[RMDB]
RNA sequence: GGGAACGACUCGAGUAGAGUCGAAAAUGAGCACGUGUGGAACGAAGAGGACGAGCGAGGAGAUCUUGUCGUGGAUCGUCUCGGUGGGAUGGAAGUGGCCCAUGUCGAGACACACGCCCACGUUCCGCGGUAGGCAAAAGUUCGCUUUUGCCUACCGAAAAGAAACAACAACAACAAC
Reactivity to DMS in 0.01 (KOAc 150mM, MgCl2 10mM, bicine 150mM(pH8.5), 24C), signal-to-noise 2, nucleotides 027 to 126: u020g010a080g040c040a080c040g050u010g000u000g000g000a100a070c070g000a090a080g000a090g000g000a050c100g020a110g020c050g020a080g000g000a150g000a090u000c030u010u010g010u010c080g040u000g000g000a090u010c110g000u000c000u000c010g010g030u000g010g010g000a060u020g010g030a060a100g010u000g000g000c000c010c000a000u000g000u000c010g010a060g010a070c010a040c010a020c030g000c030c020c020a130c000g010u000u000c000c010g030
Reactivity to 2A3 in 0.01 (KOAc 150mM, MgCl2 10mM, bicine 150mM(pH8.5), 24C), signal-to-noise 3, nucleotides 027 to 126: u210g010a040g020c070a030c120g080u070g040u090g040g020a060a010c020g020a120a090g110a170g070g060a030c100g000a030g020c020g010a040g020g020a140g030a090u120c030u070u060g060u080c020g020u020g000g060a130u070c110g020u000c000u000c000g000g020u020g020g020g000a050u080g070g080a120a030g130u180g250g030c030c000c000a020u050g110u150c000g000a000g010a000c000a000c000a010c050g020c020c000c010a040c020g000u050u000c010c010g000